RNA sequence: GGGAACGACUCGAGUAGAGUCGAAAAGAUAUGGACAUGUGUGACACUUCUAUCGCGACGAAGGAGCUUCGGAAACGAAGCUCCAGAGCGAUAGGGAGAGUGUCCACAUGUCCUAAGUCAAAAUGCAAUGCAAAAGUGUUCGCACUUUUGCAUUGCAACUAUAGGCGAGAUUCGUCUCGCCUAUAGUAAAAGAAACAACAACAACAAC
Reactivity to 2A3 in 0.01 (KOAc 150mM, MgCl2 10mM, bicine 150mM(pH8.5), 24C), signal-to-noise 4, nucleotides 027 to 156: g010a010u020a020u060g010g000a000c020a000u010g010u000g180u270g010a000c000a000c010u260u300c000u050a000u000c000g010c020g140a300c020g010a190a030g010g000a000g000c000u000u000c000g020g010a010a020a010c000g010a000a000g000c010u000c000c000a000g000a000g000c010g000a000u000a000g010g030g000a220g020a000g000u000g000u000c000c010a000c000a000u000g000u000c000c000u010a000a000g000u000c010a000a000a010a020u070g000c000a000a000u010g000c000a000a000a000a000g000u020g000u090u180c300g040c110a000c000u010u000u000u000g000c010a000u000u000g000c000a000
Reactivity to DMS in 0.01 (KOAc 150mM, MgCl2 10mM, bicine 150mM(pH8.5), 24C), signal-to-noise 1, nucleotides 027 to 156: g000a080u000a140u010g000g020a050c020a010u000g010u000g040u000g020a040c000a010c010u000u000c000u000a000u000c010g030c090g020a190c200g020a220a230g020g000a020g000c000u010u000c010g040g000a080a050a150c000g010a000a010g010c000u000c000c010a010g000a210g020c010g000a010u010a000g010g000g020a300g000a020g020u000g010u000c010c020a000c010a000u000g000u000c000c000u000a000a050g000u000c030a080a040a070a160u010g000c010a010a000u000g010c030a000a000a000a010g090u000g090u010u030c300g010c030a020c020u000u000u000u000g000c030a000u000u000g000c000a000

Description: An RNA of 207 nucleotides, treated with 2A3 and DMS and read out base by base. For 2A3 the reverse transcriptase was SuperScript II with manganese.